[RMDB]
RNA sequence: GGGAACGACUCGAGUAGAGUCGAAAAUUCACUGGGGUCGACAGCUCUGGGGAGAGAAGGGAGGAUCGGAUGGGAAGAGUAUAUCCUAUGGGAAUCCCCGUCCUCCCGUCACGUCCAGCCCCUCCCCUACGUAUGAGGUUCGCCUCAUACAAAAGAAACAACAACAACAAC
Reactivity to DMS in 0.01 (KOAc 150mM, MgCl2 10mM, bicine 150mM(pH8.5), 24C), signal-to-noise 9, nucleotides 027 to 129: u020u020c060a090c050u000g000g000g000g000u000c100g030a050c080a120g030c060u040c010u020g010g010g000g000a070g010a010g000a180a070g020g000g010a040g040g010a010u050c120g040g010a070u080g010g010g000a060a110g030a130g040u010a080u040a080u020c030c030u030a060u020g020g030g020a090a110u020c000c010c020c020g000u000c020c010u010c000c000c000g010u000c040a060c100g020u020c040c010a010g020c010c000c000c000u010c010c010c020c030u000a050c170
Reactivity to 2A3 in 0.01 (KOAc 150mM, MgCl2 10mM, bicine 150mM(pH8.5), 24C), signal-to-noise 9, nucleotides 027 to 129: u090u040c030a030c090u030g000g000g000g020u050c030g040a050c040a040g030c020u010c010u060g040g000g050g010a090g000a010g030a100a100g010g000g000a010g010g000a050u170c090g030g050a070u100g050g010g020a060a050g070a040g160u100a060u040a040u170c020c020u080a150u170g100g010g050a030a070u060c010c000c000c000g020u010c000c000u000c000c000c000g010u010c010a010c020g050u010c000c010a030g020c010c010c000c000u020c000c000c000c000u010a030c070

This 170-nucleotide RNA was probed chemically with DMS and 2A3. DMS adducts were read by reverse transcription with MarathonRT. Conditions: 150 mM KOAc, 10 mM MgCl2 and 150 mM bicine (pH 8.5), 24 C. The DMS profile rests on 116,062 reads. 2A3 adducts were read by reverse transcription with SuperScript II with manganese.